[RMDB]
RNA sequence: GGGAACGACUCGAGUAGAGUCGAAAAUCAUCAUCAUCUCCAUUUCUGGGAUCAGGGUCCUGGGGCAGCUCCAAGCCCAAAUAAUCCAUGAACCCAAAAGGGGCUUGGCCUACCAUGCAGGGGGAGACCCUAAUCGGUAUUUCGAUACCGAUUAGGGAAAAGAAACAACAACAACAAC
Reactivity to DMS in 0.01 (KOAc 150mM, MgCl2 10mM, bicine 150mM(pH8.5), 24C), signal-to-noise 2, nucleotides 027 to 126: u020c070a070u000c070a100u020c050a080u000c030u000c000c050a140u000u000u000c070u000g000g010g010a080u000c100a100g010g010g030u020c040c030u010g020g010g010g030c040a020g000c060u000c020c020a020a030g000c000c000c000a070a050a140u000a070a110u000c070c020a090u000g020a080a210c000c000c000a000a030a170a150g050g000g020g030c030u000u000g000g000c300c000u010a050c050c040a060u010g000c070a120g010g000g000g000g030a070g000a140